[RMDB]
RNA sequence: GGGAACGACUCGAGUAGAGUCGAAAAGGACGGAUUAAAAUAGCUCAGAAAACUGACCCUGGCGGGAAUGAAAUCUUUGAGUUUGCGAAUGCCGCCGACCGCAUCUUCUCGUCGCCGACGGUGGUUGAUGGCAUCGUGUACGUCGGCAGCGAUGACAAACGUUUUACAUGUUCGCAUGUAAAACGUUAAAAGAAACAACAACAACAAC
Reactivity to 2A3 in 0.01 (KOAc 150mM, MgCl2 10mM, bicine 150mM(pH8.5), 24C), signal-to-noise 3, nucleotides 027 to 156: g010g000a070c010g000g020a030u090u170a070a110a140a210u120a080g020c020u020c070a010g030a030a100a070a130c020u040g040a040c010c010c000u030g180g030c120g000g000g070a010a070u090g040a080a080a080u090c070u050u180u140g020a020g010u000u130u090g060c050g070a100a030u100g130c020c000g000c000c010g000a010c040c030g000c020a090u030c050u170u010c040u020c020g050u020c030g000c050c020g020a030c030g000g030u080g040g040u100u070g060a060u080g010g090c030a080u050c070g070u080g050u090a050c050g010u010c000g020g030c000a000g000c000g040a040u140g040a060c120a000
Reactivity to DMS in 0.01 (KOAc 150mM, MgCl2 10mM, bicine 150mM(pH8.5), 24C), signal-to-noise 1, nucleotides 027 to 156: g000g000a070c030g010g000a110u000u000a040a020a200a160u010a100g020c020u020c000a150g000a070a080a100a230c040u000g000a200c000c010c010u000g040g030c240g020g050g000a080a110u000g010a060a110a100u000c080u000u000u000g030a030g050u000u000u000g030c020g000a150a080u010g000c020c000g030c000c030g020a070c060c100g000c000a110u010c050u000u020c030u000c030g090u000c040g050c030c010g020a020c040g020g030u010g000g000u000u010g010a080u010g010g010c050a300u020c000g050u000g030u000a070c010g000u020c040g070g030c020a100g010c020g000a050u000g020a090c130a050